[RMDB]
RNA sequence: GGGAACGACUCGAGUAGAGUCGAAAAUUAUACAAGAAUAUGUGCACAGGUAGUCCUUCUAUAGUUGAAUUUAAUAGGUUGGCUACCUGUGACUGGACUGAAAGUGGUGAUUACACCCUUGCCAAUAGAGGUAGGCACUUCGGUGCCUACAAAAGAAACAACAACAACAAC
Reactivity to 2A3 in 0.01 (KOAc 150mM, MgCl2 10mM, bicine 150mM(pH8.5), 24C), signal-to-noise 2, nucleotides 027 to 129: u090u050a090u000a000c160a090a000g120a070a030u080a000u090g090u030g070c000a000c000a050g000g080u030a000g010u060c000c000u000u000c020u000a040u000a000g090u060u170g040a070a140u080u080u100a090a080u010a000g000g000u000u000g000g000c010u000a050c000c000u040g000u000g000a000c000u040g020g000a000c010u000g050a120a000a000g050u080g010g020u090g000a100u040u030a110c000a000c000c000c000u000u000g060c020c000a080a090u130a040g120a000g060
Reactivity to DMS in 0.01 (KOAc 150mM, MgCl2 10mM, bicine 150mM(pH8.5), 24C), signal-to-noise 3, nucleotides 027 to 129: u070u050a090u000a120c180a160a070g000a040a060u060a110u010g050u020g040c000a030c030a130g000g030u000a080g010u000c000c050u000u050c000u020a010u000a080g030u030u000g020a170a070u000u000u000a000a000u000a050g050g040u000u040g000g050c010u010a010c000c040u060g020u030g030a000c040u060g040g040a010c060u030g060a070a080a070g090u000g000g040u010g020a150u000u030a170c080a070c000c000c000u010u040g030c050c020a000a000u090a070g000a130g000

The record gives the reactivity of an RNA of 170 nucleotides to 2A3 and DMS. For 2A3 the reverse transcriptase was SuperScript II with manganese. Reactivities are given for positions 27 through 129. The DMS profile rests on 7,285 reads. For 2A3, 3,506 sequencing reads were counted. Conditions: 150 mM KOAc, 10 mM MgCl2 and 150 mM bicine (pH 8.5), 24 C.